Source: RMDB library M2PK50, as collected in RNAgym. This 177-nucleotide RNA was probed chemically with 2A3 and DMS.
RNA sequence: GGGAACGACUCGAGUAGAGUCGAAAAACGCGAGGAUUCGUCCUCGCGUACAUAAGUGAGAUCGCCGGAUAGCUGCCUAAGUGAGUUCGCCGGAUAGCUGCCAAGCACAUAGUUUCGACUAUGUGAAUAUACGAUACUUAUUCGUAAGUAUCGUAUAAAAAGAAACAACAACAACAAC
Reactivity to 2A3 in 0.01 (KOAc 150mM, MgCl2 10mM, bicine 150mM(pH8.5), 24C), signal-to-noise 9, nucleotides 027 to 126: a000c000g000c000g000a000g010g000a020u040u060c200g050u030c070c000u000c000g000c000g000u000a000c000a040u170a050a050g050u020g070a070g010a120u080c070g010c040c010g000g020a030u050a040g010c030u120g100c020c040u140a210a070g050u070g180a040g010u020u040c030g000c010c010g020g000a050u060a010g010c020u030g030c020c020a040a020g080c000a000c000a010u000a000g010u010u090u090c180g050a020c000u000a000u000g000u010g000a010a000
Reactivity to DMS in 0.01 (KOAc 150mM, MgCl2 10mM, bicine 150mM(pH8.5), 24C), signal-to-noise 9, nucleotides 027 to 126: a010c000g010c000g020a010g010g010a030u000u010c210g010u000c000c000u000c000g000c000g010u000a010c120a070u010a080a070g010u010g000a100g000a080u000c080g000c050c020g000g000a070u000a100g010c020u000g010c040c060u000a080a100g020u010g010a080g010u000u000c090g010c030c020g000g000a060u000a080g010c030u000g010c040c050a100a130g010c000a010c000a010u000a010g000u000u000u010c190g010a040c000u000a000u000g010u000g000a070a100